[RMDB]
RNA sequence: GGGAACGACUCGAGUAGAGUCGAAAAGUUAGGGCUAGUAGACAACUUGCCAAAGACAAGGUUAAUGAAUGUGUUAGGUCUCAGUCUCAGAGAUUCGGAUUCUGUGGUAAUGGUACACAUUUGUUUUCACUAGCAAAUGCAGCACCAAAUGGCAUGACAUCUCGGUUCUAUUCGUAGAACCGAGAUGAAAAGAAACAACAACAACAAC
Reactivity to 2A3 in 0.01 (KOAc 150mM, MgCl2 10mM, bicine 150mM(pH8.5), 24C), signal-to-noise 2, nucleotides 027 to 156: g070u130u110a040g030g070g000c070u070a050g030u020a040g040a110c070a090a080c060u060u090g000c020c060a140a100a020g090a060c020a060a010g040g070u140u050a060a040u130g030a050a010u030g040u000g020u090u090a070g020g090u000c020u010c050a070g080u020c030u000c040a030g020a020g020a190u150u240c090g020g030a070u050u020c020u080g010u030g020g050u070a080a040u060g030g010u020a020c000a000c000a010u000u010u020g060u010u030u020u040c100a090c060u070a000g000c010a000a040a000u050g000c030a020g000c020a020c000c030a010a140a030u060g000g020c020a030u060g020a040
Reactivity to DMS in 0.01 (KOAc 150mM, MgCl2 10mM, bicine 150mM(pH8.5), 24C), signal-to-noise 1, nucleotides 027 to 156: g000u000u020a050g020g010g010c010u000a110g040u000a070g050a070c040a000a080c010u010u000g020c000c020a140a160a150g020a070c010a020a020g060g020u000u000a100a080u000g000a020a050u000g040u000g020u000u010a130g020g000u010c030u010c060a100g000u000c030u000c020a200g000a130g000a090u010u000c030g030g020a070u000u010c030u000g030u000g030g020u000a050a130u000g020g030u000a030c000a060c000a040u000u000u000g000u010u000u000u000c200a120c090u010a080g000c010a020a020a050u000g000c030a080g030c070a050c010c000a010a050a120u000g030g000c020a070u000g000a220
Background: Chemical mapping of a 207-nucleotide RNA with 2A3 and DMS. The RNA was probed in 150 mM KOAc, 10 mM MgCl2 and 150 mM bicine (pH 8.5) at 24 C. 2A3 adducts were read by reverse transcription with SuperScript II with manganese. It was measured as part of the RMDB library OK3TST. DMS adducts were read by reverse transcription with MarathonRT.